RNA sequence: GGGAACGACUCGAGUAGAGUCGAAAACCCUCACUGCUUAUAUGAGGAAGCGUGUGUAUAAACCUAUGACAGGGUUCACGCCAUUCAAUCUAUAAAUCGACAGCGACGUUCUGCCGGGAUACCGACGGGUGAAUGAUUUCUUCGGAAAUCAUUCACCAAAAGAAACAACAACAACAAC
Reactivity to DMS in 0.01 (KOAc 150mM, MgCl2 10mM, bicine 150mM(pH8.5), 24C), signal-to-noise 2, nucleotides 027 to 126: c010c000c030u010c050a030c030u070g030c050u030u010a030u010a020u000g010a020g000g000a160a280g000c040g050u040g020u040g000u010a060u050a060a050a050c020c020u010a050u100g000a180c140a220g010g030g040u000u000c000a010c000g000c000c010a200u000u000c000a080a100u040c100u020a020u020a040a010a100u020c120g010a150c050a040g000c040g020a040c020g000u000u000c080u030g010c000c000g000g010g020a100u020a100c030c000g000a020c200g000
Reactivity to 2A3 in 0.01 (KOAc 150mM, MgCl2 10mM, bicine 150mM(pH8.5), 24C), signal-to-noise 5, nucleotides 027 to 126: c010c000c000u010c020a040c000u060g040c030u140u050a040u030a080u300g030a030g070g020a020a010g000c030g000u020g010u020g040u000a050u140a170a110a030c020c000u070a100u200g130a060c060a100g010g030g000u080u060c010a000c000g000c000c010a050u110u090c040a000a100u030c030u090a090u050a090a110a060u080c040g070a040c020a030g010c020g030a040c020g070u100u020c010u030g040c030c000g040g000g020a080u080a190c030c040g050a040c050g110